The record gives the reactivity of an RNA of 207 nucleotides to DMS and 2A3. Reactivities are given for positions 27 through 156.

RNA sequence: GGGAACGACUCGAGUAGAGUCGAAAACGCGAUGGAUACGUCCAUCGCGAAUCCGUCCAAGCCGCGGACGUUAAACUGUGGCACGGUUGUGCCUAGGUGCAACCCUGCUGAAAAUGGCGGCACCCCUGCCCAAGCUACCGUCUACGGACGGUAGCAACGUAGUCCCUCAGUUCGCUGAGGGACUACGAAAAGAAACAACAACAACAAC
Reactivity to DMS in 0.01 (KOAc 150mM, MgCl2 10mM, bicine 150mM(pH8.5), 24C), signal-to-noise 1, nucleotides 027 to 156: c010g040c000g020a030u000g000g020a000u000a100c300g070u000c000c000a010u010c000g060c000g010a000a010u010c040c010g010u010c000c010a080a130g040c000c060g010c080g000g020a040c000g030u010u010a010a040a040c040u000g030u010g020g020c000a040c100g020g010u000u000g010u010g000c010c020u000a080g110g050u000g000c050a010a030c000c000c030u000g000c030u000g000a110a080a060a110u000g030g040c030g000g060c010a220c020c020c010c030u010g040c060c060c030a100a200g030c000u000a000c010c010g000u000c000u010a120c250g060g000a020c000g000g040u000a020g010c000a020a040
Reactivity to 2A3 in 0.01 (KOAc 150mM, MgCl2 10mM, bicine 150mM(pH8.5), 24C), signal-to-noise 2, nucleotides 027 to 156: c000g000c000g000a000u000g010g000a010u030a040c230g110u010c000c000a000u000c000g000c000g000a000a000u020c010c010g000u000c000c000a070a020g000c000c000g000c000g000g000a000c010g010u000u030a050a030a060c110u100g050u240g120g000c000a000c000g010g000u000u010g010u020g010c010c030u090a220g110g000u010g010c000a000a000c010c000c000u000g010c000u050g050a030a010a060a140u100g040g000c000g000g020c000a100c000c000c000c010u050g060c040c040c020a050a010g000c000u000a000c000c000g000u000c010u010a050c290g100g000a000c000g000g010u000a000g000c000a000a000